[RMDB]
RNA sequence: GGGAACGACUCGAGUAGAGUCGAAAAGGGACGCGAGGACUGUCCUCGCCGCCGUCGCGGGCAGUGUCUAGCCAGGCCUUGACAAGCUAGCCGGAGGAGCGCCUAGGAACCCGAGCCGGAGCUCAGCGAAUUAUAGAGAGUUCGCUCUCUAUAAUUCAAAAGAAACAACAACAACAAC
Reactivity to 2A3 in 0.01 (KOAc 150mM, MgCl2 10mM, bicine 150mM(pH8.5), 24C), signal-to-noise 2, nucleotides 027 to 126: g020g000g030a030c030g010c010g020a010g030g030a060c130u150g130u170c010c000u010c000g020c020c000g010c000c030g060u080c040g040c010g060g000g000c030a000g050u010g030u100c040u050a020g020c040c040a090g000g070c020c000u030u090g040a020c020a020a020g040c010u080a020g060c020c000g040g000a040g030g030a070g000c060g020c000c030u040a070g010g050a100a090c010c010c020g010a020g010c020c020g060g050a050g020c020u020c060a010g050c020
Reactivity to DMS in 0.01 (KOAc 150mM, MgCl2 10mM, bicine 150mM(pH8.5), 24C), signal-to-noise 4, nucleotides 027 to 126: g000g000g020a070c130g020c040g010a040g010g000a280c140u000g010u000c010c000u000c020g030c030c100g000c040c060g020u000c050g010c100g000g010g010c020a050g000u010g000u000c030u000a080g010c020c080a110g010g010c050c050u000u010g010a090c110a110a140g000c050u010a090g030c050c020g000g000a080g000g000a080g020c050g000c030c040u000a110g010g000a090a080c040c050c020g000a120g010c020c050g000g020a110g000c050u000c040a090g010c190
Structure probing data (2A3 and DMS) for a 177-nucleotide construct. For 2A3 the reverse transcriptase was SuperScript II with manganese. The reactions ran in a buffer of 150 mM KOAc, 10 mM MgCl2 and 150 mM bicine (pH 8.5), at 24 C. The DMS profile rests on 3,410 reads. For 2A3, 2,364 sequencing reads were counted.